[RMDB]
RNA sequence: GGGAACGACUCGAGUAGAGUCGAAAAGGAUCUGCCUUGUGGAGACGGGAUAGGGCGUUUGCCUUCCAAAUGCAGUAUCUUAAACUUGAGAAAACCGGGCUUGGUUAUGAGAUUGUGCAAGCGUGCCGACACUUACUACAUUCGUGUAGUAAGUGUCAAAAGAAACAACAACAACAAC
Reactivity to DMS in 0.01 (KOAc 150mM, MgCl2 10mM, bicine 150mM(pH8.5), 24C), signal-to-noise 7, nucleotides 027 to 126: g000g000a050u000c040u000g010c020c080u000u000g020u000g020g010a090g010a080c110g010g000g000a120u000a060g010g000g000c020g020u010u000u000g010c050c040u010u010c060c020a040a060a070u010g000c020a040g000u000a050u000c030u000u000a060a090a110c080u010u020g000a110g000a080a040a080a100c080c050g010g010g010c050u010u010g010g010u000u000a050u000g000a080g000a070u010u010g010u000g010c030a050a060g000c080g020u000g010c100c090
Reactivity to 2A3 in 0.01 (KOAc 150mM, MgCl2 10mM, bicine 150mM(pH8.5), 24C), signal-to-noise 7, nucleotides 027 to 126: g030g010a050u020c020u050g030c000c020u110u080g100u070g090g030a060g020a060c080g010g010g060a080u130a130g090g030g000c030g030u050u100u190g040c010c000u050u000c030c000a030a040a030u070g000c000a010g040u100a030u020c010u020u040a120a120a090c030u070u150g040a040g050a100a120a010a010c040c030g000g100g010c040u070u080g050g040u110u060a110u250g060a090g020a090u070u160g050u060g060c000a040a030g020c040g060u090g080c030c040